An RNA of 177 nucleotides, treated with DMS and read out base by base. DMS adducts were read by reverse transcription with MarathonRT. The reactions ran in a buffer of 150 mM KOAc, 10 mM MgCl2 and 150 mM bicine (pH 8.5), at 24 C. Source: RMDB library OK2TRN, as collected in RNAgym.
RNA sequence: GGGAACGACUCGAGUAGAGUCGAAAACAUCAUGCCAGUCGAUCACAUCAUGCGAGCGUCAUUCGCCGAAGCCGAAGAGUUCUCUGAAAAGUGGGAGCGGAACCUUGGAUGGCGUCUCCUGCGCCAGAGAAGACAUAGUGUUCGCACUAUGUCUUCUAAAAGAAACAACAACAACAAC
Reactivity to DMS in 0.01 (KOAc 150mM, MgCl2 10mM, bicine 150mM(pH8.5), 24C), signal-to-noise 7, nucleotides 027 to 126: c080a080u010c070a060u000g010c030c030a060g010u010c050g020a060u000c060a070c070a090u000c080a070u010g020c050g010a070g020c070g020u010c080a120u000u000c060g010c020c030g000a140a120g010c030c020g000a060a070g010a190g010u010u000c020u010c010u000g000a060a040a090a140g020u010g010g010g010a040g000c060g000g010a050a110c040c020u000u010g010g010a090u000g010g010c020g000u010c060u000c020c020u000g000c020g010c080c060a090g000